[RMDB]
RNA sequence: GGGAACGACUCGAGUAGAGUCGAAAAGAUAUGGACGUUUGUCAGUCUUAAGUAUCGAAGAACUGGUUUCGGAAACGAAACCAGGGAGAUACGGAGGACUUGGAUUUAACGUCCUAAGUCAAACACGUACUCCAAUGUUCGCAUUGGAGUACGUGAAACUUCUAGAUCGGUUCGCCGAUCUAGAAGUAAAAGAAACAACAACAACAAC
Reactivity to 2A3 in 0.01 (KOAc 150mM, MgCl2 10mM, bicine 150mM(pH8.5), 24C), signal-to-noise 4, nucleotides 027 to 156: g040a020u050a050u110g000g000a010c000g010u000u010u010g020u010c000a000g010u010c010u060u020a030a020g010u000a000u010c040g090a260a010g020a050a020c000u000g000g000u020u000u000c020g000g050a070a060a050c010g000a010a010a000c000c000a000g000g010g010a060g000a000u010a010c020g010g010a020g010g010a000c020u040u110g040g010a040u200u250u170a000a000c010g000u000c000c000u010a030a020g030u010c040a040a060a010c000a000c000g000u000a000c000u010c010c000a000a000u010g040u080u100c300g020c120a010u000u000g010g000a000g000u000a000c000g000u000g000a000a000
Reactivity to DMS in 0.01 (KOAc 150mM, MgCl2 10mM, bicine 150mM(pH8.5), 24C), signal-to-noise 1, nucleotides 027 to 156: g000a080u000a100u010g000g010a030c000g050u000u000u000g000u000c060a060g020u020c000u000u000a300a300g000u000a000u020c010g010a150a230g010a150a250c000u000g000g020u000u000u000c000g000g010a230a060a270c000g020a010a000a010c010c000a000g000g000g050a200g000a070u000a000c010g010g000a200g000g000a010c050u000u060g020g000a030u000u010u000a040a000c020g120u000c000c000u000a000a090g010u000c030a080a170a180c000a020c000g030u000a000c000u000c000c000a020a010u000g010u000u000c210g040c000a050u010u000g000g000a020g030u010a000c000g000u000g000a030a090

Structure probing data (2A3 and DMS) for a 207-nucleotide construct. Conditions: 150 mM KOAc, 10 mM MgCl2 and 150 mM bicine (pH 8.5), 24 C. Source: RMDB library RNAMAK, as collected in RNAgym. For 2A3 the reverse transcriptase was SuperScript II with manganese. For 2A3, 5,422 sequencing reads were counted.